[RMDB]
RNA sequence: GGGAACGACUCGAGUAGAGUCGAAAAUCGACAACGUGACUACAGCUCGCGAGAACAUCGCUGUACUGCGUAACCGGUCACAUUUUGCUUAGGUUGAUAGAGCACAAUCACGUGGGUGACCAAUCAACCAUAUGGACGGAUUCGUCCGUCCAUAUGGAAAAGAAACAACAACAACAAC
Reactivity to 2A3 in 0.01 (KOAc 150mM, MgCl2 10mM, bicine 150mM(pH8.5), 24C), signal-to-noise 5, nucleotides 027 to 126: u070c010g030a010c030a120a020c040g020u030g020a020c020u040a030c060a030g000c030u050c070g070c080g060a040g050a120a050c070a100u100c040g000c020u020g050u080a050c040u070g040c020g040u040a050a050c060c050g000g000u010c000a020c010a050u060u100u110u100g040c020u050u080a080g010g100u050u070g070a070u080a100g080a020g020c010a020c020a080a030u070c020a020c130g030u110g050g120g010u030g030a040c020c000a010a060u100c020a010a070
Reactivity to DMS in 0.01 (KOAc 150mM, MgCl2 10mM, bicine 150mM(pH8.5), 24C), signal-to-noise 6, nucleotides 027 to 126: u010c060g000a120c100a090a050c050g020u000g020a040c140u000a100c110a050g020c040u000c110g010c060g000a040g000a130a110c230a090u000c090g010c010u000g020u000a050c100u000g000c140g010u000a070a080c160c090g000g010u000c030a030c060a140u010u010u010u000g000c020u000u000a100g010g000u000u000g010a080u010a070g010a040g010c010a110c130a060a040u000c050a050c110g020u000g000g020g020u010g010a090c070c010a090a090u000c100a050a110

Description
Structure probing data (2A3 and DMS) for a 177-nucleotide construct. The data come from the RNA Mapping Database (RMDB), library OK2TST. The 2A3 profile rests on 6,523 reads. 2A3 adducts were read by reverse transcription with SuperScript II with manganese. Conditions: 150 mM KOAc, 10 mM MgCl2 and 150 mM bicine (pH 8.5), 24 C.